The record gives the reactivity of an RNA of 207 nucleotides to 2A3 and DMS. Values cover nucleotides 27 to 156. Conditions: 150 mM KOAc, 10 mM MgCl2 and 150 mM bicine (pH 8.5), 24 C. The DMS profile rests on 14,046 reads.
RNA sequence: GGGAACGACUCGAGUAGAGUCGAAAACAAUUGUGAAUGGGAGUUCACUCAUGAUUUGGCUCUCUGUUUGUCUGUUAUUGGUGUAUAAGAAUGCUUGUGAUUUUUGUACAUUGAUUUUGUAUCCUGAGACUUUGCUGAAGUUGCUUAUCAGCUUAAAAUAUUAAUCCUCAUUCGUGAGGAUUAAUAUAAAAGAAACAACAACAACAAC
Reactivity to 2A3 in 0.01 (KOAc 150mM, MgCl2 10mM, bicine 150mM(pH8.5), 24C), signal-to-noise 3, nucleotides 027 to 156: c010a030a080u150u110g010u050g100a060a080u040g010g090g010a070g050u130u140c010a020c040u100c020a100u080g110a080u020u020u100g010g000c000u010c000u000c020u030g080u070u140u020g030u020c030u030g080u090u070a030u030u110g010g000u010g000u020a010u010a050a000g010a020a010u080g110c140u230u190g130u150g130a070u010u000u020u010u030g010u000a000c000a030u000u030g020a030u020u110u080u110g090u050a030u040c010c000u030g020a050g060a090c070u110u170u100g000c010u000g000a050a040g040u060u060g070c020u120u170a050u110c000a010g020c010u020u070a050a090a010
Reactivity to DMS in 0.01 (KOAc 150mM, MgCl2 10mM, bicine 150mM(pH8.5), 24C), signal-to-noise 4, nucleotides 027 to 156: c030a030a050u010u000g030u010g010a040a020u000g000g020g010a230g020u000u000c010a030c050u000c090a060u000g010a270u000u000u010g010g010c040u000c020u000c020u000g010u010u000u010g000u000c030u000g010u000u010a050u010u010g020g020u000g010u010a020u000a030a060g000a020a040u000g020c120u000u010g030u000g010a070u000u000u000u000u000g020u000a010c000a030u000u000g010a050u000u000u000u000g010u010a100u000c020c020u000g010a150g010a050c070u000u000u010g040c020u000g010a040a300g010u010u000g010c020u000u000a140u000c100a140g010c020u000u010a020a090a060
For 2A3, 929 sequencing reads were counted.
2A3 adducts were read by reverse transcription with SuperScript II with manganese.
It was measured as part of the RMDB library OK3TST.